Source information
The record gives the reactivity of an RNA of 307 nucleotides to DMS and 2A3. The RNA was probed in 150 mM KOAc, 10 mM MgCl2 and 150 mM bicine (pH 8.5) at 24 C. It was measured as part of the RMDB library POS240. For DMS, 6,245 sequencing reads were counted.

RNA sequence: GGGAACGACUCGAGUAGAGUCGAAAAGACCAAGUCGUGAGACUUGGUCAGUGCCAGCGUGAGCUGGCACACAGCUUCUCUUCGGAGAAGCUGAGCUCCAAUCUACGGAUUGGAGCAAGGUGAACGUGAGUUCACCAAGUAGAACUUCGGUUCUACAGCUUCACUACGGUGAAGCAAGUUGAUCGGUGACGAUCAACACUUACCAACUUCGGUUGGUAAGAGUUAUUCGUGAGAAUAACAAAAGUUUGGUCGUACUUAACGACCUUACUGAGCACUUCGGUGCUCAGAAAAGAAACAACAACAACAAC
Reactivity to DMS in 0.01 (KOAc 150mM, MgCl2 10mM, bicine 150mM(pH8.5), 24C), signal-to-noise 2, nucleotides 027 to 266: g000a010c000c000a010a000g000u000c000g000u010g000a230g000a200c000u000u000g000g000u000c010a010g010u010g020c000c000a010g020c030g010u010g000a190g040c000u010g040g040c000a030c000a140c010a020g010c010u000u000c000u010c020u000u020c180g020g010a000g000a030a000g010c000u000g010a090g010c000u000c000c000a000a000u000c000u000a110c210g020g000a000u000u010g000g000a010g000c000a020a020g010g020u000g020a020a000c000g000u000g000a200g010u000u000c000a000c000c000a040a090g000u000a000g000a000a000c010u010u030c220g030g020u000u000c000u010a000c010a130g020c000u000u010c000a020c000u020a130c160g020g020u000g000a000a000g010c000a050a040g000u010u000g010a010u000c010g000g000u030g000a170c000g000a010u000c000a000a020c010a210c020u000u000a000c000c000a000a000c000u000u040c210g010g000u010u000g000g000u000a010a000g000a150g000u010u000a010u000u000c010g010u030g000a210g000a020a000u000a000a010c000a170a090a120a020g000u000u000u010g000g000u000c000g010u000a020c030u000u010a040a000c000g000a030c000c000u000u000a030
Reactivity to 2A3 in 0.01 (KOAc 150mM, MgCl2 10mM, bicine 150mM(pH8.5), 24C), signal-to-noise 9, nucleotides 027 to 266: g000a000c000c000a000a010g010u010c010g030u050g170a130g000a050c000u000u000g000g000u000c000a000g000u000g000c000c000a000g000c020g050u110g040a030g000c000u000g000g010c000a010c000a000c000a000g000c000u010u000c000u000c000u010u060c270g150g000a000g000a000a000g000c000u000g010a040g000c000u000c000c000a000a000u000c000u020a040c300g140g000a000u000u000g000g000a000g000c000a010a090g000g000u000g000a000a000c010g040u060g080a040g010u010u000c000a000c000c000a000a040g000u000a000g000a000a000c010u050u050c290g110g000u000u000c000u000a000c010a020g000c000u000u010c010a000c010u050a030c210g110g000u000g000a000a000g000c000a000a050g000u000u000g000a000u000c010g010g030u050g050a040c010g000a000u000c000a000a000c000a000c000u000u000a000c000c000a020a010c010u040u060c210g130g000u000u000g000g000u000a000a000g020a010g000u000u000a000u000u010c010g010u050g110a110g000a030a000u010a000a000c030a010a130a020a010g030u050u070u110g000g000u010c010g000u010a030c030u190u210a030a000c000g000a000c000c000u000u000a020